Chemical mapping of a 207-nucleotide RNA with DMS and 2A3. The DMS profile rests on 7,087 reads.
RNA sequence: GGGAACGACUCGAGUAGAGUCGAAAACGGUCUAUACGCUUGUCCUUAUUGAGUGUUUGUGUGGAGUGUGUCGUGGACUUUUUCAGAGUUGUUAGCAAGCCCCGGUCCGGGAGUGAUAGCUGAUGGCAUGGAUUCGUGUAGGUGACACUUUCAACCAUAUUAUGAGCGAAUUCGUUCGCUCAUAAUAAAAAGAAACAACAACAACAAC
Reactivity to DMS in 0.01 (KOAc 150mM, MgCl2 10mM, bicine 150mM(pH8.5), 24C), signal-to-noise 2, nucleotides 027 to 156: c050g010g000u000c040u010a060u000a070c050g010c030u000u010g010u000c020c030u000u000a080u010u000g020a090g040u010g030u000u010u000g060u020g010u010g020g000a110g040u000g020u000g010u000c060g050u010g020g020a080c030u010u010u010u010u000c070a150g010a120g040u010u000g030u000u010a110g010c060a080a220g020c030c000c010c030g030g010u000c060c090g000g010g020a060g020u000g000a100u000a140g020c010u000g020a080u000g030g000c040a100u000g010g000a150u000u010c070g020u000g020u010a060g010g000u000g000a110c050a050c090u000u010u010c030a040a060c020c040a280
Reactivity to 2A3 in 0.01 (KOAc 150mM, MgCl2 10mM, bicine 150mM(pH8.5), 24C), signal-to-noise 1, nucleotides 027 to 156: c020g020g020u030c040u100a050u040a090c050g040c050u060u070g020u000c050c030u100u180a180u110u190g040a060g000u120g040u070u100u110g090u020g020u050g060g000a020g000u040g010u000g010u020c020g040u030g000g000a020c000u110u090u010u090u040c070a050g060a030g070u020u020g040u050u000a040g050c050a060a060g000c020c000c000c020g000g050u070c060c040g000g000g000a110g020u060g010a040u060a060g030c010u040g000a100u050g040g000c030a030u040g000g030a010u050u080c040g000u070g000u090a070g000g030u020g000a000c040a000c000u060u050u090c020a040a040c050c000a000